Conditions: 150 mM KOAc, 10 mM MgCl2 and 150 mM bicine (pH 8.5), 24 C. This 177-nucleotide RNA was probed chemically with DMS and 2A3. It was measured as part of the RMDB library RFMREP.
RNA sequence: GGGAACGACUCGAGUAGAGUCGAAAAGGAAUGAGAGGGAGAGCGCAGCAUCUGGCUCCACACGAUCAUCCAGUACAUUUCACCACAUUGUCUGCAGCUCACCUCGCAGGAAUCACUUCGGUGAGCGGUGAUUGUUAGUGUUCGCACUAACAAUCACAAAAGAAACAACAACAACAAC
Reactivity to DMS in 0.01 (KOAc 150mM, MgCl2 10mM, bicine 150mM(pH8.5), 24C), signal-to-noise 2, nucleotides 027 to 126: g000g000a130a030u010g020a060g020a100g000g000g010a230g010a020g030c030g020c040a040g010c070a070u000c150u000g000g010c020u000c030c040a010c100a040c090g000a080u010c090a070u000c000c030a090g000u010a070c170a150u000u000u000c070a120c060c020a040c170a060u000u010g000u010c010u000g000c070a090g000c020u010c000a130c040c000u010c040g020c030a030g000g000a150a140u000c070a020c000u000u010c130g000g000u000g010a040g000c160g000
Reactivity to 2A3 in 0.01 (KOAc 150mM, MgCl2 10mM, bicine 150mM(pH8.5), 24C), signal-to-noise 2, nucleotides 027 to 126: g100g000a120a140u130g000a050g010a010g050g040g000a210g000a010g060c020g000c070a000g030c000a070u040c060u020g060g000c030u050c030c000a040c000a000c030g000a030u040c000a060u000c050c000a020g050u060a040c040a050u080u040u120c140a100c060c010a080c040a110u010u110g090u160c040u080g000c020a030g000c010u000c000a010c000c020u060c010g030c020a000g030g110a070a050u030c040a030c070u060u010c060g130g000u050g030a020g000c070g030
About this RNA:
The DMS profile rests on 1,294 reads.